[RMDB]
RNA sequence: GGGAACGACUCGAGUAGAGUCGAAAAUAGGCGAACGAGAGGCCCUCUCCUGUGCGGAGUUGUCACGCUGACACAAUUGUUAUGAUGUCCGAUUCCGGUAGCAUCGCGGCGAUGGUUUCAUAGGACAUCUUAUGAACCCAAGUGCUUCGGGGAAGCAAUAGUAUUAUUAUUUCGAUAAUAAUACUAUAAAAGAAACAACAACAACAAC
Reactivity to 2A3 in 0.01 (KOAc 150mM, MgCl2 10mM, bicine 150mM(pH8.5), 24C), signal-to-noise 2, nucleotides 027 to 156: u100a020g010g020c010g030a060a020c040g050a050g020a040g130g040c000c000c000u020c020u000c020c000u060g060u110g070c080g010g010a030g020u090u060g050u070c030a020c110g030c080u030g080a000c000a000c000a080a220u070u040g060u130u070a060u140g030a020u000g010u010c020c000g030a030u040u010c030c010g020g080u060a010g020c000a030u100c120g020c100g200g000c050g030a040u040g010g000u000u040u050c110a120u140a080g000g000a010c000a010u030c000u010u000a040u010g030a010a040c010c010c010a050a080g080u050g080c010u030u060c020g070g000g000g030a020a000g000c030a010
Reactivity to DMS in 0.01 (KOAc 150mM, MgCl2 10mM, bicine 150mM(pH8.5), 24C), signal-to-noise 3, nucleotides 027 to 156: u000a080g020g020c010g020a070a080c050g010a130g010a090g030g030c030c040c030u000c040u000c010c000u000g040u030g010c040g040g030a180g020u000u000g010u010c030a080c060g010c040u010g000a140c030a050c070a070a180u000u000g020u010u010a050u000g010a080u000g010u010c000c010g000a130u020u000c020c020g000g010u020a180g020c050a090u000c080g020c120g020g030c070g010a210u000g020g000u000u000u000c030a080u000a090g020g000a130c130a060u000c010u000u000a040u010g000a060a080c040c030c060a080a150g010u000g020c030u000u000c030g010g010g030g020a060a070g010c040a080